[RMDB]
RNA sequence: GGGAACGACUCGAGUAGAGUCGAAAAUUUAGAAAACAAAAGAUGAUUGACGCAGCAUUAGACCAAUUGAAGACAGAGUACACUGAAGAUGUAGAUGGUGAGAUGUACAAUGAGUAUACAAUGUUAAAUCACGUCAUAUGUUCGCAUAUGACGUGAUAAAAGAAACAACAACAACAAC
Reactivity to 2A3 in 0.01 (KOAc 150mM, MgCl2 10mM, bicine 150mM(pH8.5), 24C), signal-to-noise 3, nucleotides 027 to 126: u020u010u050a060g040a030a070a010a030c040a010a060a030a010g070a110u110g010a070u050u100g060a000c020g000c020a040g000c010a050u010u080a060g030a060c000c010a030a060u040u130g040a060a000g000a040c030a000g070a000g100u060a050c040a000c030u060g050a090a030g040a080u080g010u090a030g020a140u080g000g060u060g030a040g010a050u040g030u060a000c010a010a130u120g020a020g040u040a040u020a090c080a040a060u090g060u140u190a100a300
Reactivity to DMS in 0.01 (KOAc 150mM, MgCl2 10mM, bicine 150mM(pH8.5), 24C), signal-to-noise 5, nucleotides 027 to 126: u010u010u010a110g000a120a090a130a120c090a060a070a100a100g010a080u000g000a140u010u000g020a100c150g010c040a050g010c030a040u000u000a070g000a090c040c060a060a080u010u010g010a060a080g000a060c050a040g000a190g010u000a020c060a030c030u000g010a070a100g010a050u010g020u000a030g010a070u000g020g010u000g010a080g010a080u000g020u010a030c040a040a040u000g000a070g000u000a060u000a060c100a040a050u010g000u010u000a050a090